[RMDB]
RNA sequence: GGGAACGACUCGAGUAGAGUCGAAAAGAUAUGGAGCGCGUAGCAAGAUCCACAUCGGAAACGAUGUGAAGAUUGAUGACCUACCGCUCCUAAGUCAAAACCUCCUGAUACUUCGGUAUCAGGAGGAGUCUGACGAUGUGUUCGCACAUCGUCAGACAAAAGAAACAACAACAACAAC
Reactivity to DMS in 0.01 (KOAc 150mM, MgCl2 10mM, bicine 150mM(pH8.5), 24C), signal-to-noise 1, nucleotides 027 to 126: g000a000u010a020u040g030g000a020g160c000g040c300g000u010a010g000c010a080a020g000a010u020c010c010a020c000a000u000c010g040g080a000a000a010c000g020a000u000g050u000g010a080a180g010a010u000u000g010a030u020g010a060c300c000u000a020c040c000g020c000u010c000c000u000a000a020g000u000c020a140a080a180a180c000c010u000c000c000u000g020a010u000a010c100u000u010c190g020g010u000a010u020c000a010g000g000a000g000g000a010

The record gives the reactivity of an RNA of 177 nucleotides to DMS. For DMS, 872 sequencing reads were counted. For DMS the reverse transcriptase was MarathonRT. It was measured as part of the RMDB library TTRDES. The reactions ran in a buffer of 150 mM KOAc, 10 mM MgCl2 and 150 mM bicine (pH 8.5), at 24 C.